[RMDB]
An RNA of 177 nucleotides, treated with 2A3 and DMS and read out base by base. The data come from the RNA Mapping Database (RMDB), library OK2TRN. The RNA was probed in 150 mM KOAc, 10 mM MgCl2 and 150 mM bicine (pH 8.5) at 24 C.
RNA sequence: GGGAACGACUCGAGUAGAGUCGAAAACGGGUGGGCGCGCGGCGCGCCACGUAUUGGGCCGUCCUGGACACUUUGGUCGUGGGGUACGCGUUGCUCCCGGUGCUGUGGAUUUUCAGCCUGUCACUCAGCAGAAGACAUAGUUCGCUAUGUCUUCUGCAAAAGAAACAACAACAACAAC
Reactivity to 2A3 in 0.01 (KOAc 150mM, MgCl2 10mM, bicine 150mM(pH8.5), 24C), signal-to-noise 2, nucleotides 027 to 126: c020g000g000g020u010g000g040g000c010g000c000g000c010g060g030c040g000c060g110c130c000a010c000g000u040a080u030u070g020g030g000c040c040g110u230c060c160u150g040g000a050c100a040c100u130u140u170g120g010u220c030g010u030g000g000g000g030u010a020c000g030c000g040u030u150g000c010u040c000c000c000g000g000u110g000c010u050g000u190g070g230a300u050u050u110u120c000a010g020c000c020u060g060u060c030a050c050u050c020a030
Reactivity to DMS in 0.01 (KOAc 150mM, MgCl2 10mM, bicine 150mM(pH8.5), 24C), signal-to-noise 2, nucleotides 027 to 126: c120g000g010g000u010g010g010g000c000g010c030g000c030g000g010c150g010c030g020c000c010a000c020g000u010a060u000u000g030g000g020c050c040g010u010c120c100u020g010g020a080c040a080c090u000u000u020g020g000u010c010g010u000g010g000g000g020u000a080c030g010c040g020u010u010g000c020u000c020c000c010g010g000u010g010c020u010g000u010g010g010a190u010u010u010u000c040a060g000c030c030u010g000u000c070a070c040u000c040a140